Conditions: 150 mM KOAc, 10 mM MgCl2 and 150 mM bicine (pH 8.5), 24 C. This 177-nucleotide RNA was probed chemically with 2A3. As a SHAPE reagent, 2A3 marks flexible, mostly unpaired nucleotides at the ribose 2'-OH.
RNA sequence: GGGAACGACUCGAGUAGAGUCGAAAAUCUCGGUAGCGCCUACAGGUCCCAAGCGAACUGAUCCACUGAUGACGGUUACGUGCUCGACGGUUCCCUUGGAAUGAGGCUCCGCGCUGCGGACCGAUCCACUGGUCGCGUCAUUCGUGACGCGACCAGUAAAAGAAACAACAACAACAAC
Reactivity to 2A3 in 0.01 (KOAc 150mM, MgCl2 10mM, bicine 150mM(pH8.5), 24C), signal-to-noise 1, nucleotides 027 to 126: u010c030u000c020g060g070u080a030g000c000g040c030c000u020a090c040a000g140g000u020c030c000c000a030a000g030c010g060a040a040c000u000g040a200u050c010c030a040c080u080g060a140u190g060a040c060g060g000u010u020a040c050g010u020g000c030u120c130g010a010c050g000g000u000u000c060c030c000u000u020g090g020a140a130u130g020a080g020g050c130u000c000c000g050c000g090c130u170g000c000g010g050a000c000c000g000a020u010c000c000